[RMDB]
RNA sequence: GGGAACGACUCGAGUAGAGUCGAAAAGAAUGGGGUUUUAACUGUGGAUGAAUGGACCUUAUCUGUUGGCUUAAAGGACUGGUAAGAUCAGACCAUCUUAUUCUUCAGGUGAAUGUUUUACUUUCCAAAGUGCUCUCCUCUGCACCAGCAGUAAUAAUGACACUGAAUAGUUCGCUAUUCAGUGUCAAAAAGAAACAACAACAACAAC
Reactivity to DMS in 0.01 (KOAc 150mM, MgCl2 10mM, bicine 150mM(pH8.5), 24C), signal-to-noise 2, nucleotides 027 to 156: g000a120a070u000g000g010g060g030u000u010u000u020a000a110c050u000g030u000g000g000a060u000g020a080a090u010g050g000a110c030c010u000u030a070u000c040u050g020u000u000g010g050c000u000u000a060a070a150g010g020a100c030u010g000g030u010a070a040g010a050u000c030a120g000a140c120c030a120u000c030u000u000a040u010u000c050u000u000c090a070g020g020u000g020a050a070u010g000u010u000u020u010a050c070u000u000u000c050c030a010a080a090g030u010g040c050u000c020u010c030c040u010c040u000g010c060a040c010c020a080g020c030a030g030u010a030a110u010a060a160
Reactivity to 2A3 in 0.01 (KOAc 150mM, MgCl2 10mM, bicine 150mM(pH8.5), 24C), signal-to-noise 3, nucleotides 027 to 156: g060a020a090u060g000g010g000g010u030u030u080u170a070a010c040u030g020u050g040g010a020u030g080a090a080u050g030g010a040c000c010u050u020a040u050c040u000g050u010u050g050g010c020u040u090a040a090a060g050g040a060c020u030g020g020u030a020a060g000a080u090c030a010g060a080c020c000a020u040c040u070u050a090u110u020c050u030u100c030a010g000g000u020g050a100a060u040g030u020u060u010u020a050c000u010u060u060c050c000a030a110a040g020u030g020c010u020c010u030c020c030u020c010u030g020c030a030c050c020a040g000c000a000g000u190a040a070u300a100a070

Conditions: 150 mM KOAc, 10 mM MgCl2 and 150 mM bicine (pH 8.5), 24 C. Structure probing data (DMS and 2A3) for a 207-nucleotide construct. Reactivities are rounded to 0.1 and cut off at 0 and 3. DMS adducts were read by reverse transcription with MarathonRT.